[RMDB]
RNA sequence: GGGAACGACUCGAGUAGAGUCGAAAAGACUGGAAGGUUGGCAGCUUCUGUAAUCACGCUUCUGUGAGGUCUGAUUGUGGGAUGGCCUGAGGCUGGGAUUCACUGUGUAGCGGACCAGCUCAUGUUGACGGAACGUCCGCACUAAGCUUGCCAUCAACAUCUUCUACUAGUUCGCUAGUAGAAGAUGAAAAGAAACAACAACAACAAC
Reactivity to 2A3 in 0.01 (KOAc 150mM, MgCl2 10mM, bicine 150mM(pH8.5), 24C), signal-to-noise 8, nucleotides 027 to 156: g030a010c040u050g020g020a030a030g030g010u010u010g010g000c000a000g010c000u020u000c020u050g060u060a030a030u010c000a000c030g010c020u230u090c020u210g070u040g050a020g000g020u000c020u050g080a190u090u130g040u100g060g090g010a020u050g010g020c020c030u050g050a040g050g010c020u040g020g010g040a080u080u090c050a050c090u060g030u030g080u270a030g020c020g010g000a000c010c010a020g010c020u020c040a060u130g090u110u110g040a070c050g020g060a160a050c080g040u000c010c010g000c010a010c040u050a030a000g040c020u070u110g000c000c010a020u020c010a010a040
Reactivity to DMS in 0.01 (KOAc 150mM, MgCl2 10mM, bicine 150mM(pH8.5), 24C), signal-to-noise 4, nucleotides 027 to 156: g000a070c040u000g020g000a060a040g020g010u000u010g020g020c020a300g000c000u000u010c010u000g030u000a060a060u010c030a040c040g010c030u000u000c030u000g010u000g010a050g010g020u010c020u000g000a160u000u000g000u010g020g030g010a060u000g000g010c020c040u000g010a300g020g020c010u000g030g010g020a100u010u000c030a060c050u000g020u010g010u000a090g030c020g010g000a070c010c010a080g010c030u000c050a070u000g020u000u000g020a150c060g000g020a070a110c100g010u000c010c010g000c010a070c060u000a050a150g010c060u000u000g010c010c010a130u010c030a060a190
Structure probing data (2A3 and DMS) for a 207-nucleotide construct. For 2A3, 9,894 sequencing reads were counted. Conditions: 150 mM KOAc, 10 mM MgCl2 and 150 mM bicine (pH 8.5), 24 C. It was measured as part of the RMDB library ARCHII.